[RMDB]
RNA sequence: GGGAACGACUCGAGUAGAGUCGAAAAUCGUGUAUUCAGACACGACGUUUUUUUAUGUUCUUUUUUAAUAAGAGAGAAGUGAAGUUGUAUAAAAAUGUAUUAAAUAUGCACUUUUUAUACAUUAACGCCCUUUCCCCCUAUUCGUAGGGGGAAAGGGAAAAGAAACAACAACAACAAC
Reactivity to 2A3 in 0.01 (KOAc 150mM, MgCl2 10mM, bicine 150mM(pH8.5), 24C), signal-to-noise 1, nucleotides 027 to 126: u010c000g000u020g000u000a090u270u300c000a110g160a170c000a000c000g030a000c010g000u000u000u000u000u000u000u020a080u080g030u030u010c000u060u080u000u080u000u000a270a300u060a300a000g030a000g050a000g040a200a000g000u030g000a220a050g200u190u060g050u090a010u000a000a000a020a000a000u020g000u000a000u060u180a050a070a140u300a030u110g000c000a160c100u000u010u010u010u010a000u000a000c000a000u070u000a140a040c100g000